This 177-nucleotide RNA was probed chemically with DMS and 2A3. The DMS profile rests on 992 reads.
RNA sequence: GGGAACGACUCGAGUAGAGUCGAAAAAACUGUGGUGCCAUGUGAGGAAAUCCACGUUAUCUCUGAUUGUCAAAAUAGACUAGUCUAGGAGACGAUAAAUCCUAUGUGGGUGAGUCCCACUCUGGCGGCAUAACGCUCUUUUCGAAGAGCGUUAUGCAAAAGAAACAACAACAACAAC
Reactivity to DMS in 0.01 (KOAc 150mM, MgCl2 10mM, bicine 150mM(pH8.5), 24C), signal-to-noise 1, nucleotides 027 to 126: a030a020c060u010g060u020g000g000u000g000c060c000a090u000g030u030g000a140g000g010a060a150a020u000c050c010a000c000g000u000u000a030u010c020u000c030u000g000a110u000u000g010u000c000a060a040a160a160u000a050g000a030c020u000a160g000u000c000u060a110g000g030a130g000a000c000g000a190u000a030a010a020u000c020c030u000a040u000g000u010g010g040g000u000g010a160g000u000c000c010c020a000c010u000c100u010g030g030c260g000
Reactivity to 2A3 in 0.01 (KOAc 150mM, MgCl2 10mM, bicine 150mM(pH8.5), 24C), signal-to-noise 2, nucleotides 027 to 126: a000a000c160u160g020u070g060g120u040g000c000c020a060u120g040u100g300a270g020g040a200a170a040u000c010c010a000c000g010u010u040a120u000c080u000c040u060g130a140u090u180g010u010c010a090a210a000a300u090a150g000a000c000u050a020g030u000c010u030a030g000g040a040g020a040c040g000a000u030a030a010a000u000c030c010u030a040u150g030u000g000g060g020u020g050a040g090u130c000c020c000a030c040u050c020u020g110g050c120g110